This 177-nucleotide RNA was probed chemically with 2A3 and DMS. For 2A3 the reverse transcriptase was SuperScript II with manganese. The 2A3 profile rests on 3,096 reads. Conditions: 150 mM KOAc, 10 mM MgCl2 and 150 mM bicine (pH 8.5), 24 C. Source: RMDB library M2PK50, as collected in RNAgym.
RNA sequence: GGGAACGACUCGAGUAGAGUCGAAAAGCGUCCUGGUUCGCCAGGACGCAAAUAAAAGGUAGACUGAGACCGUCUAACUCAGAUAACCAGAAAUAGACGGAAAAACUGACUUGUUCGCAAGUCAGAAGAAAAUAGAUGGGUUCGCCCAUCUAUUUUCAAAAGAAACAACAACAACAAC
Reactivity to 2A3 in 0.01 (KOAc 150mM, MgCl2 10mM, bicine 150mM(pH8.5), 24C), signal-to-noise 2, nucleotides 027 to 126: g000c000g000u000c000c000u030g010g050u030u040c170g040c060c000a000g010g020a000c000g000c000a010a000a000u020a000a040a010a000g090g070u080a030g060a240c010u010g000a000g000a040c020c020g000u020c010u040a260a190c010u000c010a000g030a050u090a080a100c020c010a020g040a010a070a010u020a000g010a000c000g010g050a020a100a000a000a010c000u000g000a000c000u000u000g000u040u120c160g010c120a000a000g000u020c000a000g000a000a030
Reactivity to DMS in 0.01 (KOAc 150mM, MgCl2 10mM, bicine 150mM(pH8.5), 24C), signal-to-noise 2, nucleotides 027 to 126: g000c020g010u000c010c010u000g000g020u000u030c190g000c000c000a000g000g010a000c000g030c000a010a040a020u010a050a040a140a120g010g010u020a090g030a170c010u000g000a000g010a090c030c000g000u000c000u000a030a130c010u010c010a010g000a100u020a040a300c010c000a060g010a040a030a150u010a010g000a030c000g000g010a170a040a060a060a180c000u000g000a010c000u000u000g000u000u010c240g010c010a020a010g010u000c000a000g000a070a080